[RMDB]
RNA sequence: GGGAACGACUCGAGUAGAGUCGAAAAGUGGCGACCUACACGCGGGUGACGGACGCGGAGAAGCAGGUCCAGCUGCAGAGGAUGGGCGAGUGCAUGCGCAAGGCUGCAGAAGGCAUCGGAGCGGUGCAGCCCCAGACAUAUUCGUAUGUCUGGGGCUAAAAGAAACAACAACAACAAC
Reactivity to DMS in 0.01 (KOAc 150mM, MgCl2 10mM, bicine 150mM(pH8.5), 24C), signal-to-noise 2, nucleotides 027 to 126: g010u010g020g040c050g000a050c000c040u010a080c110a130c060g030c020g000g020g000u010g000a090c120g000g020a070c060g000c050g020g010a140g000a080a090g020c040a040g000g000u000c050c070a120g000c020u010g020c040a060g010a140g000g020a090u020g010g010g000c050g000a090g000u000g000c060a040u010g000c080g010c070a100a090g010g000c010u000g000c070a070g000a080a100g000g040c050a040u000c070g050g000a170g010c020g020g000u000g020c080
Reactivity to 2A3 in 0.01 (KOAc 150mM, MgCl2 10mM, bicine 150mM(pH8.5), 24C), signal-to-noise 2, nucleotides 027 to 126: g050u060g050g000c010g000a040c000c030u030a040c060a020c080g020c020g010g000g060u130g020a020c040g050g040a010c010g000c020g070g010a120g010a040a040g050c090a030g000g050u000c040c000a040g070c020u050g010c000a020g070a020g120g080a080u050g010g060g050c000g020a070g020u040g030c050a040u060g080c000g050c060a100a040g110g000c010u010g020c020a010g010a110a010g120g000c010a000u060c010g030g000a070g020c020g010g060u030g020c020

Source: RMDB library OK2TRN, as collected in RNAgym.
An RNA of 177 nucleotides, treated with DMS and 2A3 and read out base by base.
DMS adducts were read by reverse transcription with MarathonRT.
For DMS, 2,070 sequencing reads were counted.